The data come from the RNA Mapping Database (RMDB), library OK2TRN.
The record gives the reactivity of an RNA of 177 nucleotides to 2A3 and DMS.
2A3 adducts were read by reverse transcription with SuperScript II with manganese.
For DMS, 2,512 sequencing reads were counted.
Conditions: 150 mM KOAc, 10 mM MgCl2 and 150 mM bicine (pH 8.5), 24 C.
[RMDB]
RNA sequence: GGGAACGACUCGAGUAGAGUCGAAAAAGGGACCAAAGAUUUUAGGCUAAAAUUCGGAUGACAACUUUGCCUUGUCAUUAUUAUCAUGGUAUGAACCAAUGGUCUGCGGUCUGCUUUUAGCCAGAUAGAUGCUAACCUAGUUCGCUAGGUUAGCAUCAAAAGAAACAACAACAACAAC
Reactivity to 2A3 in 0.01 (KOAc 150mM, MgCl2 10mM, bicine 150mM(pH8.5), 24C), signal-to-noise 2, nucleotides 027 to 126: a000g010g020g000a000c000c000a020a050a010g020a000u040u040u050u150a050g030g000c030u070a050a020a060a180u190u130c130g090g010a010u010g000a000c020a000a020c010u170u190u190g060c030c000u000u000g000u010c010a020u000u110a050u080u130a130u110c050a060u110g150g000u170a050u150g070a020a040c000c030a010a040u040g020g000u000c000u000g000c010g000g020u000c000u030g170c010u000u050u000u040a010g070c000c000a020g030a080u160a060
Reactivity to DMS in 0.01 (KOAc 150mM, MgCl2 10mM, bicine 150mM(pH8.5), 24C), signal-to-noise 4, nucleotides 027 to 126: a010g010g010g000a010c010c000a040a300a040g000a030u000u000u000u000a160g010g010c030u000a080a070a150a050u010u010c120g020g010a020u000g010a010c050a000a010c040u000u010u000g000c220c220u000u000g000u000c000a010u010u000a060u020u010a090u010c100a090u000g000g000u000a130u000g000a070a100c030c050a020a050u000g000g000u000c000u000g010c300g010g010u000c010u010g000c080u010u010u000u000a180g000c030c010a070g000a090u020a050